[RMDB]
RNA sequence: GGGAACGACUCGAGUAGAGUCGAAAAAGAGCCGGAUACGUCCGGCUCAACGGGGGAUACGUGUGGUGCCGUCCGCUCCCCCUAUGGCUUAACAAAUGCACCACACACUAGGCUACGGCCUAGUGAAAAAAGGUGUAUGUGUUCGCACAUACACCAACUCUACACACAACUUCGGUUGUGUGUAGAGAAAAGAAACAACAACAACAAC
Reactivity to 2A3 in 0.01 (KOAc 150mM, MgCl2 10mM, bicine 150mM(pH8.5), 24C), signal-to-noise 2, nucleotides 027 to 156: a000g010a000g000c010c020g000g000a040u040a070c140g070u020c010c000g000g020c000u000c010a010a000c010g000g000g010g010g010a010u040a080c040g010u040g000u020g030g020u010g010c010c000g030u030c020c110g030c070u040c000c000c020c010c020u040a210u260g100g000c060u150u200a110a020c060a060a070a080u090g000c010a000c020c000a000c000a000c000a000c010u000a000g000g000c000u010a030c300g060g000c010c000u010a000g010u020g020a070a000a010a000a000a000g000g000u010g010u000a000u020g010u000g010u030u040c130g070c100a000c000a000u000a000c000a000c000c000a000a000

Conditions: 150 mM KOAc, 10 mM MgCl2 and 150 mM bicine (pH 8.5), 24 C. This 207-nucleotide RNA was probed chemically with 2A3. Values are in units of 0.01, from 0 to 300, in steps of 10. The 2A3 profile rests on 1,525 reads.